[RMDB]
RNA sequence: GGGAACGACUCGAGUAGAGUCGAAAAGAAAGAAAGUACUGAAAGUAUUGUGGGAAAUAAUGUGUAAAUCAUUGACCGUUCCUGCGCUGGUCAGAAUAAAAUUUUAGUCCAGACACCACCAGUAUAACCAAUCUAGUGACCUUCGGGUCACUAGAAACGUUAUACAUCACUUCGGUGAUGUAUAACGAAAAGAAACAACAACAACAAC
Reactivity to 2A3 in 0.01 (KOAc 150mM, MgCl2 10mM, bicine 150mM(pH8.5), 24C), signal-to-noise 4, nucleotides 027 to 156: g050a040a080a010g070a060a090a010g020u040a010c020u040g050a110a080a060g090u110a140u240u200g010u050g010g000g020a020a040a010u050a010a010u040g010u000g040u070a030a030a030u050c010a010u010u030g030a010c000c040g030u060u070c040c030u050g000c020g000c010u000g000g040u030c020a020g050a080a060u190a090a130a060a080u110u130u080u090a010g010u000c010c000a010g010a040c010a010c040c010a010c010c010a010g010u040a060u030a130a030c070c030a030a050u010c000u000a000g000u000g000a010c010c000u010u040c170g070g000g000u000c000a000c000u000a000g000a000a000a000
Reactivity to DMS in 0.01 (KOAc 150mM, MgCl2 10mM, bicine 150mM(pH8.5), 24C), signal-to-noise 2, nucleotides 027 to 156: g040a070a050a150g030a120a120a130g030u000a070c030u010g000a080a120a180g020u000a050u000u010g010u000g010g020g000a090a080a220u000a020a020u010g010u000g000u000a100a110a200u000c040a080u000u000g020a000c030c010g010u000u000c040c020u010g040c050g020c000u000g010g000u010c010a070g000a050a060u010a000a070a070a300u000u000u000u000a100g020u000c050c000a100g000a120c050a090c050c010a060c060c020a090g020u010a050u010a050a060c000c060a020a090u000c000u010a020g030u000g020a010c000c010u000u000c300g000g020g000u000c000a000c010u000a000g010a000a010a070